[RMDB]
RNA sequence: GGGAACGACUCGAGUAGAGUCGAAAACGAGGUGGACGUUGUCCUCCUUCGGAUGCCCAGGUCGGACCGCGAGGAGGUGGAGAUGCCAUGCCGACCCGAAGAGGAAAGAAGGACGCGAGACGCGAACGAAUAGUUCACCGUUCGCGGUGAACUAUUCAAAAGAAACAACAACAACAAC
Reactivity to DMS in 0.01 (KOAc 150mM, MgCl2 10mM, bicine 150mM(pH8.5), 24C), signal-to-noise 2, nucleotides 027 to 126: c020g000a060g000g040u000g000g020a010c020g020u000u030g000u000c010c000u000c020c010u000u000c010g020g000a170u000g000c020c000c000a120g000g000u000c030g000g010a130c050c060g020c050g000a130g010g010a100g000g000u000g010g000a080g000a070u000g020c050c050a070u010g000c030c020g010a060c040c020c020g020a070a070g010a100g020g000a060a080a070g010a060a040g010g030a090c060g020c050g000a070g010a050c080g000c070g010a090a110c110
Reactivity to 2A3 in 0.01 (KOAc 150mM, MgCl2 10mM, bicine 150mM(pH8.5), 24C), signal-to-noise 1, nucleotides 027 to 126: c010g000a010g080g000u040g010g070a090c300g150u210u270g000u180c000c000u020c040c000u120u070c000g020g000a030u110g010c020c000c010a000g060g070u040c040g030g000a060c000c030g020c060g030a080g030g030a030g010g060u050g060g030a080g000a040u120g060c020c000a030u100g000c000c000g000a020c000c000c010g050a070a010g040a010g050g080a010a060a040g080a070a000g040g020a020c030g010c020g040a070g030a050c030g020c020g030a070a010c050

Chemical mapping of a 177-nucleotide RNA with DMS and 2A3. The 2A3 profile rests on 1,565 reads. It was measured as part of the RMDB library VIROID. For 2A3 the reverse transcriptase was SuperScript II with manganese. For DMS, 2,012 sequencing reads were counted.